Notes:
An RNA of 177 nucleotides, treated with DMS and 2A3 and read out base by base. DMS adducts were read by reverse transcription with MarathonRT. The DMS profile rests on 9,398 reads. It was measured as part of the RMDB library OK2TRN. 2A3 adducts were read by reverse transcription with SuperScript II with manganese. Values are in units of 0.01, from 0 to 300, in steps of 10. The RNA was probed in 150 mM KOAc, 10 mM MgCl2 and 150 mM bicine (pH 8.5) at 24 C.

RNA sequence: GGGAACGACUCGAGUAGAGUCGAAAAUGGCUAUGACUGAGGAAAGCGUGGACCAGGUGGAAGUGAACUGCCUAUGCGUCCAGCAUGGCCAAAGCUGCAAUAAUACCCGCUGCUUUGUAAAGGAGGGCGCUAUUAUCUCAUUCGUGAGAUAAUAGCGAAAAGAAACAACAACAACAAC
Reactivity to DMS in 0.01 (KOAc 150mM, MgCl2 10mM, bicine 150mM(pH8.5), 24C), signal-to-noise 6, nucleotides 027 to 126: u010g010g000c010u000a040u000g010a140c040u000g010a180g020g000a090a060a100g010c030g040u010g010g000a050c080c060a040g000g040u000g000g000a100a150g020u010g000a090a130c040u000g010c040c010u000a070u010g010c070g000u000c010c020a060g000c010a040u000g010g000c020c010a030a080a060g000c020u000g010c060a080a070u000a090a100u010a120c040c020c040g010c070u000g000c030u000u000u010g000u010a090a100a110g010g000a060g000g010g000
Reactivity to 2A3 in 0.01 (KOAc 150mM, MgCl2 10mM, bicine 150mM(pH8.5), 24C), signal-to-noise 7, nucleotides 027 to 126: u060g010g000c010u010a020u060g070a300c030u050g030a090g090g130a230a090a050g040c040g030u040g000g030a070c060c030a030g010g000u040g030g080a110a090g070u100g190a150a080c020u020g000c010c000u050a070u130g030c020g010u020c000c010a000g000c000a010u030g000g000c010c000a020a030a000g020c020u060g000c020a010a090u140a240a050u110a190c020c010c020g000c020u020g020c010u070u090u120g160u160a100a100a030g050g030a050g020g040g010